[RMDB]
RNA sequence: GGGAACGACUCGAGUAGAGUCGAAAAGAAAAGUUGUCUAGACGUUGACAGCGAACGUCGAAAAAGGAACCAGGGCUUGGUUCCGAAGCCCGAAACGAUCUAAAGUCAUGAUCGGAUGACGAAGAAAGGGUAAGUAUAUCUUCGGAUAUACUUACCCAAAAGAAACAACAACAACAAC
Reactivity to 2A3 in 0.01 (KOAc 150mM, MgCl2 10mM, bicine 150mM(pH8.5), 24C), signal-to-noise 3, nucleotides 027 to 126: g150a000a090a000a000g040u070u070g010u000c020u060a070g010a130c080g130u120u110g040a080c050a050g050c030g040a050a050c010g030u000c000g030a010a030a050a010a000g030g020a000a000c000c040a040g110g210g030c170u130u040g000g010u010u000c030c000g000a010a030g030c000c020c000g020a070a040a010c000g000a020u000c010u130a110a110a090g170u110c040a110u090g040a060u040c020g000g020a040u070g000a040c020g030a070a080g070a140a070a060
Reactivity to DMS in 0.01 (KOAc 150mM, MgCl2 10mM, bicine 150mM(pH8.5), 24C), signal-to-noise 4, nucleotides 027 to 126: g000a040a080a100a080g020u000u010g000u010c060u000a100g000a020c020g020u010u000g020a110c100a070g000c170g000a040a020c010g010u000c010g000a030a040a030a060a110g000g000a010a000c020c010a070g020g020g020c130u020u010g000g010u010u000c000c010g010a040a050g000c020c010c000g000a090a080a110c050g010a040u010c010u050a100a120a120g020u010c120a040u010g010a040u000c060g000g000a080u000g000a000c020g000a120a110g000a070a120a120
Structure probing data (2A3 and DMS) for a 177-nucleotide construct. The DMS profile rests on 8,626 reads. In probing experiments dimethyl sulfate is read out at A N1 and C N3, which are open when not base-paired. The RNA was probed in 150 mM KOAc, 10 mM MgCl2 and 150 mM bicine (pH 8.5) at 24 C. For 2A3 the reverse transcriptase was SuperScript II with manganese.